RNA sequence: GGGAACGACUCGAGUAGAGUCGAAAACUAUAGAUAAAUCAGCGCAUUCCAACGAUAUUACAGGCGUUAUGUCUGAAAUGGAAGGUUUUGAAAAAGCAUUCGAUGACGCCAUUCAAUAUGCUAAGAAACUUCCCAAUGCAUUCGUGCAUUGGGAAGUAAAAGAAACAACAACAACAAC
Reactivity to 2A3 in 0.01 (KOAc 150mM, MgCl2 10mM, bicine 150mM(pH8.5), 24C), signal-to-noise 1, nucleotides 027 to 126: c030u030a000u220a300g080a170u170a120a150a080u040c000a010g070c010g000c070a020u020u000c020c000a060a030c070g020a040u000a030u240u240a090c000a020g000g040c060g080u190u130a070u150g000u000c030u010g000a050a050a000u070g040g010a060a000g060g000u040u070u010u160g080a030a000a000a000a000g000c000a020u010u060c030g100a040u040g020a020c060g050c060c000a000u040u040c050a080a040u070a010u080g030c010u020a100a030g090a020a070
Reactivity to DMS in 0.01 (KOAc 150mM, MgCl2 10mM, bicine 150mM(pH8.5), 24C), signal-to-noise 2, nucleotides 027 to 126: c040u000a160u020a140g010a100u000a040a130a110u000c040a060g050c150g010c160a120u010u000c060c000a040a150c120g000a130u000a080u000u000a190c060a070g020g020c040g000u000u010a030u050g000u000c040u020g010a070a040a060u000g010g020a060a070g010g030u000u000u000u000g000a020a060a040a110a080g020c010a050u010u020c150g000a120u010g000a050c070g010c030c010a090u000u000c140a040a110u010a010u000g020c080u000a110a140g000a140a080
Chemical mapping of a 177-nucleotide RNA with 2A3 and DMS.
For DMS the reverse transcriptase was MarathonRT.
The DMS profile rests on 835 reads.
Conditions: 150 mM KOAc, 10 mM MgCl2 and 150 mM bicine (pH 8.5), 24 C.
Reactivities are rounded to 0.1 and cut off at 0 and 3.
The data come from the RNA Mapping Database (RMDB), library OK2TST.